The record gives the reactivity of an RNA of 177 nucleotides to DMS and 2A3. Conditions: 150 mM KOAc, 10 mM MgCl2 and 150 mM bicine (pH 8.5), 24 C. Reactivities are given for positions 27 through 126. For DMS, 13,102 sequencing reads were counted. The data come from the RNA Mapping Database (RMDB), library OK1LIB. For DMS the reverse transcriptase was MarathonRT.
[RMDB]
RNA sequence: GGGAACGACUCGAGUAGAGUCGAAAAGGUCAUGGGCGUGACACCCUGUAUUUCGCUGGCCAGGGCUUCACGGUGGUGGCCACCGAUUUCAGCGACGUUGCCGUCGCGCAACUUCGCCGAAGUGCCCGAAUUUAAACCUGUUCGCAGGUUUAAAUUCAAAAGAAACAACAACAACAAC
Reactivity to DMS in 0.01 (KOAc 150mM, MgCl2 10mM, bicine 150mM(pH8.5), 24C), signal-to-noise 4, nucleotides 027 to 126: g010g010u000c010a030u010g020g010g000c010g050u010g000a040c130a170c000c000c010u010g010u030a090u030u030u020c060g000c080u010g000g030c120c010a050g000g000g000c110u010u010c040a060c030g000g000u000g010g060u000g000g010c020c000a060c100c070g000a060u000u010u010c040a060g020c000g000a010c020g000u000u000g000c010c020g020u050c300g020c160g030c000a000a010c000u000u010c010g010c020c030g010a020a020g020u010g010c000c010c030
Reactivity to 2A3 in 0.01 (KOAc 150mM, MgCl2 10mM, bicine 150mM(pH8.5), 24C), signal-to-noise 9, nucleotides 027 to 126: g010g000u030c010a010u050g050g040g110c010g020u020g000a000c000a030c040c000c000u010g050u040a250u050u190u160c140g020c100u080g040g010c020c010a040g020g020g010c040u070u060c030a010c030g170g210u150g040g030u030g020g030c010c010a010c010c010g020a020u010u020u030c020a010g000c010g010a010c030g010u020u010g020c030c060g300u280c090g000c030g000c020a000a000c000u010u000c000g030c000c000g020a020a010g030u020g070c000c000c020